[RMDB]
RNA sequence: GGGAACGACUCGAGUAGAGUCGAAAACGUCUUUGCGACGGUUCAUCAGAUCAAUCAAGAAUCCAUGUGUGGAAUACUUCGAACCUAAUAAAGCUCCCAGUUCCACAGAAGCACUCACCACAUGCAAUUCCGCAUGGAGACCACGCCUAGUAGCAGACGUAUUGACCUGUUUCGACAGGUCAAUACGAAAAGAAACAACAACAACAAC
Reactivity to DMS in 0.01 (KOAc 150mM, MgCl2 10mM, bicine 150mM(pH8.5), 24C), signal-to-noise 1, nucleotides 027 to 156: c030g030u010c000u010u000u030g050c000g020a080c010g010g040u010u030c060a070u000c020a060g010a080u020c060a130a120u000c030a030a120g030a150a080u000c020c010a070u000g030u020g010u020g010g020a170a030u000a040c050u010u010c000g010a080a120c010c020u000a140a130u000a080a000a100g060c010u000c000c000c000a100g010u000u000c000c010a060c080a290g010a060a100g010c030a040c020u000c010a100c060c030a020c050a060u010g000c000a030a140u000u000c040c020g020c010a060u000g000g010a170g010a100c060c030a030c080g000c020c010u000a100g020u000a090g050c060a100g020a170
Reactivity to 2A3 in 0.01 (KOAc 150mM, MgCl2 10mM, bicine 150mM(pH8.5), 24C), signal-to-noise 3, nucleotides 027 to 156: c010g030u000c010u040u030u240g050c060g010a030c030g010g030u040u030c040a110u050c060a040g080a090u070c050a090a050u050c050a130a090g060a130a030u050c030c000a060u090g020u030g030u060g100g040a040a010u050a110c040u050u120c110g040a040a020c010c050u090a210a090u100a210a170a000g010c000u010c010c010c030a010g030u030u060c010c010a050c020a010g060a030a010g040c000a000c050u020c020a080c070c000a090c020a050u080g010c010a020a100u200u060c090c030g020c020a020u020g000g010a020g040a040c000c080a020c070g040c020c020u010a060g020u040a030g000c030a020g010a060